[RMDB]
RNA sequence: GGGAACGACUCGAGUAGAGUCGAAAACGGGAGGGGAGUGAAACAGUACCUGAAACCGUGCGCCCGCAAGGCGUCGGAGCACCCUUUUAGAGGUGUGACGGCGUGCCUUUUGUAGAAUGAGCCAGCGAUACCAAAAGGUAUUCGUACCUUUUGGUAUAAAAGAAACAACAACAACAAC
Reactivity to 2A3 in 0.01 (KOAc 150mM, MgCl2 10mM, bicine 150mM(pH8.5), 24C), signal-to-noise 9, nucleotides 027 to 126: c010g010g020g010a080g030g020g010g000a080g050u130g080a080a050a030c060a040g080u070a050c010c000u030g040a170a020a010c010c010g000u030g020c070g030c000c000c010g010c050a020a010g040g000c000g000u000c000g000g000a010g000c000a010c010c000c000u020u170u030u130a190g060a110g030g000u010g010u020g010a010c010g000g000c010g010u050g020c010c000u070u110u040u110g100u080a070g040a170a130u120g010a030g060c030c020a030g030c040g060
Reactivity to DMS in 0.01 (KOAc 150mM, MgCl2 10mM, bicine 150mM(pH8.5), 24C), signal-to-noise 9, nucleotides 027 to 126: c020g000g000g010a170g010g000g000g010a140g020u000g010a130a080a300c150a120g020u010a100c010c010u000g000a110a110a200c020c010g000u000g000c150g000c000c000c010g010c180a050a030g000g010c000g010u000c000g010g000a300g000c000a000c000c000c020u000u030u020u040a110g010a100g010g010u000g010u000g010a300c010g010g000c010g010u020g010c030c010u000u000u020u010g010u010a060g010a100a080u010g000a070g000c060c040a070g000c110g010
Source: RMDB libraries RFM100 and RFMREP, as collected in RNAgym. An RNA of 177 nucleotides, treated with 2A3 and DMS and read out base by base. The reactions ran in a buffer of 150 mM KOAc, 10 mM MgCl2 and 150 mM bicine (pH 8.5), at 24 C. DMS adducts were read by reverse transcription with MarathonRT. As a SHAPE reagent, 2A3 marks flexible, mostly unpaired nucleotides at the ribose 2'-OH.